[RMDB]
RNA sequence: GGGAACGACUCGAGUAGAGUCGAAAAAGUUUCCAAUUCGUUGGAAACUACUGUCCGAAUGCGGAAUAUAAAAUCCUCCGCUUAAGGAUUUUACCGACUUAAAGUACACUAGUUUCGACUAGUGUAAACUAUUACAAGCAUUCGUGCUUGUAAUAGUAAAAGAAACAACAACAACAAC
Reactivity to DMS in 0.01 (KOAc 150mM, MgCl2 10mM, bicine 150mM(pH8.5), 24C), signal-to-noise 7, nucleotides 027 to 126: a040g000u000u000u000c000c000a000a030u000u010c180g020u000u000g010g000a000a010a010c000u000a050c200u000g010u000c000c000g000a120a090u010g000c000g000g010a030a030u000a040u000a100a080a170a160u020c300c050u000c020c010g000c010u000u000a080a200g000g000a010u000u000u000u000a140c010c010g010a100c240u000u010a050a080a120g010u000a000c000a010c000u000a000g000u000u000u010c200g010a020c000u000a000g010u000g010u000a010a040
Reactivity to 2A3 in 0.01 (KOAc 150mM, MgCl2 10mM, bicine 150mM(pH8.5), 24C), signal-to-noise 6, nucleotides 027 to 126: a000g000u000u010u000c010c000a010a020u090u070c200g040u030u000g000g000a010a000a000c000u020a040c040u050g020u000c000c000g030a070a020u160g000c000g010g040a070a020u130a030u060a120a200a050a090u070c020c040u000c010c000g020c020u010u010a050a010g000g000a000u010u010u030u050a060c000c000g070a050c140u110u200a160a070a080g100u020a020c000a000c000u010a010g010u020u050u090c180g090a010c010u000a000g000u000g000u000a010a000
The data come from the RNA Mapping Database (RMDB), library M2PK50. An RNA of 177 nucleotides, treated with DMS and 2A3 and read out base by base. DMS adducts were read by reverse transcription with MarathonRT. The RNA was probed in 150 mM KOAc, 10 mM MgCl2 and 150 mM bicine (pH 8.5) at 24 C. For 2A3 the reverse transcriptase was SuperScript II with manganese.